[RMDB]
Source: RMDB library TTRINS, as collected in RNAgym. Structure probing data (DMS and 2A3) for a 177-nucleotide construct. The RNA was probed in 150 mM KOAc, 10 mM MgCl2 and 150 mM bicine (pH 8.5) at 24 C. Reactivities are given for positions 27 through 126.
RNA sequence: GGGAACGACUCGAGUAGAGUCGAAAAGAUAUGGACAUGGUACUCUAUGAAGGGAGUCACACCUACCCACCAUGUUCGGAAACGAACAUGAGGGUGUGACUCCUGGAGAGUGAGAGUGUCCUAAGUCCUUCGAUAUUAGGUUCGCCUAAUAUCGAAGAAAAGAAACAACAACAACAAC
Reactivity to DMS in 0.01 (KOAc 150mM, MgCl2 10mM, bicine 150mM(pH8.5), 24C), signal-to-noise 5, nucleotides 027 to 126: g010a120u000a210u010g000g010a000c000a020u000g020g030u010a040c010u000c010u000a280u010g000a210a230g020g020g010a010g020u000c000a010c000a010c040c030u000a100c050c050c080a300c070c010a000u000g010u000u000c010g000g000a150a090a120c000g000a010a010c000a000u000g000a090g010g010g000u000g020u000g000a010c000u000c000c000u030g000g010a010g000a010g010u000g000a090g000a210g030u000g000u000c000c010u010a050a160g000u000c070
Reactivity to 2A3 in 0.01 (KOAc 150mM, MgCl2 10mM, bicine 150mM(pH8.5), 24C), signal-to-noise 3, nucleotides 027 to 126: g090a050u240a170u300g030g000a010c020a030u110g040g150u300a060c020u070c020u060a300u300g030a020a030g040g000g000a020g000u010c010a010c010a000c000c040u170a240c080c050c000a050c000c030a020u000g000u020u000c000g000g000a090a090a030c010g000a020a000c000a000u000g010a050g010g000g000u000g000u000g000a000c000u010c000c000u010g000g000a010g010a000g020u050g020a090g040a000g030u030g000u010c010c000u040a130a040g130u130c000